Chemical mapping of a 177-nucleotide RNA with DMS and 2A3. For 2A3 the reverse transcriptase was SuperScript II with manganese. For DMS, 1,722 sequencing reads were counted. For DMS the reverse transcriptase was MarathonRT. The 2A3 profile rests on 1,951 reads. Conditions: 150 mM KOAc, 10 mM MgCl2 and 150 mM bicine (pH 8.5), 24 C.
[RMDB]
RNA sequence: GGGAACGACUCGAGUAGAGUCGAAAAUAUGAUUUCUGCCUCCUCUAAGGACGAGCUUAAUUGUAAAGAAAACAGAAUUUCCACGAUGAUGGCAAAACCCUCUGAUAUUAUUUGAGAAUAAAAAUUCCCUACGUACUUUAUUCGUAAAGUACGUAGGAAAAGAAACAACAACAACAAC
Reactivity to DMS in 0.01 (KOAc 150mM, MgCl2 10mM, bicine 150mM(pH8.5), 24C), signal-to-noise 3, nucleotides 027 to 126: u000a080u010g010a100u020u000u010c040u000g000c030c030u000c020c020u000c130u010a160a100g040g010a050c120g010a150g010c010u000u010a050a060u010u010g010u000a090a080a120g010a050a020a030a080c080a080g020a110a170u000u000u020c020c030a080c150g020a060u000g010a030u000g000g000c060a110a050a100a150c030c020c010u020c030u000g030a110u000a060u000u000a070u000u000u040g010a140g000a110a090u000a070a080a070a060a130u000u000c070
Reactivity to 2A3 in 0.01 (KOAc 150mM, MgCl2 10mM, bicine 150mM(pH8.5), 24C), signal-to-noise 3, nucleotides 027 to 126: u100a040u050g070a050u020u070u010c000u020g000c010c010u050c010c000u040c040u070a090a040g040g000a020c040g050a070g040c000u040u080a060a070u170u040g050u080a080a090a120g070a070a090a020a000c010a030g080a120a090u000u080u000c020c000a040c040g050a090u050g010a010u060g020g000c040a030a020a020a100c000c040c030u010c040u040g070a040u010a070u300u130a120u040u170u090g060a040g010a070a040u180a140a140a140a020a050u270u150c130